[RMDB]
RNA sequence: GGGAACGACUCGAGUAGAGUCGAAAACUUACUGCCUGAACACAAUGGCUAAAUGACUAUGAGGACAUGGAAGGCCCCAUUGUUAAAGGAAUCUUUUUAUGCCUUGGCUUAGUUUAAGCCUGCUCGCACGGAUUCAUGGGUUCGCCCAUGAAUCCGUAAAAGAAACAACAACAACAAC
Reactivity to 2A3 in 0.01 (KOAc 150mM, MgCl2 10mM, bicine 150mM(pH8.5), 24C), signal-to-noise 1, nucleotides 027 to 126: c060u070u060a030c040u140g050c030c010u030g160a140a010c020a000c000a100a070u050g040g000c000u140a130a030a120u110g020a100c010u000a060u190g080a000g010g110a010c010a010u000g030g000a090a040g130g050c030c010c120c000a060u150u140g090u050u100a020a040a040g000g010a010a020u070c010u000u300u050u000u000a060u210g100c010c000u050u090g010g000c000u110u060a080g100u300u190u170a010a020g000c000c010u000g050c030u030c010g050c000
Reactivity to DMS in 0.01 (KOAc 150mM, MgCl2 10mM, bicine 150mM(pH8.5), 24C), signal-to-noise 1, nucleotides 027 to 126: c110u000u010a050c240u010g000c050c000u000g010a060a070c190a040c100a040a050u000g020g000c070u000a060a090a090u000g010a080c030u000a040u000g020a140g000g000a100c030a030u000g000g000a100a080g000g010c130c140c040c020a060u000u000g030u000u000a100a080a080g000g000a090a060u000c050u000u020u000u010u000a070u040g030c000c090u000u000g010g000c040u000u000a050g000u010u020u020a030a040g000c000c020u000g000c120u000c090g000c190